[RMDB]
RNA sequence: GGGAACGACUCGAGUAGAGUCGAAAAUUUAAACGAGUCCAGGGCUCUAGUGCCGCUCGACUAGAGCCCUGUCAGUUAUGGACCACGAGCAGUCCAUGUAAAAAUAAAAUAAAUAAAGUUGGCGUUCGUGCCGGCAAAAGAAACAACAACAACAAC
Reactivity to DMS in 0.01 (KOAc 150mM, MgCl2 10mM, bicine 150mM(pH8.5), 24C), signal-to-noise 2, nucleotides 027 to 135: u040u040u030a050a060a040c120g010a150g010u030c060c000a020g010g000g000c000u020c010u000a010g000u000g010c090c060g000c060u020c050g040a160c000u010a040g010a050g030c030c000c000u020g010u010c030a180g020u000u070a080u040g010g010a020c040c020a110c140g000a090g020c100a190g010u010c000c000a000u010g000u060a000a020a030a030a060u140a080a050a030a070u110a150a110a080u300a050a060a130g000u000u020g060g010c100g000u040u010c070g000u060g070c160c110g010g040c020a030
Reactivity to 2A3 in 0.01 (KOAc 150mM, MgCl2 10mM, bicine 150mM(pH8.5), 24C), signal-to-noise 3, nucleotides 027 to 135: u010u040u050a050a030a020c030g010a010g020u010c030c000a010g000g000g000c000u000c000u000a000g000u030g120c040c080g070c080u080c050g000a000c000u000a000g000a000g000c000c010c000u020g000u010c010a020g020u040u190a050u100g010g010a000c050c000a050c090g030a020g010c040a010g000u020c010c020a000u020g070u160a040a080a060a070a050u250a130a130a100a010u300a130a140a070u300a060a170a050g010u040u020g000g000c000g070u110u100c060g020u230g000c000c000g000g010c000a110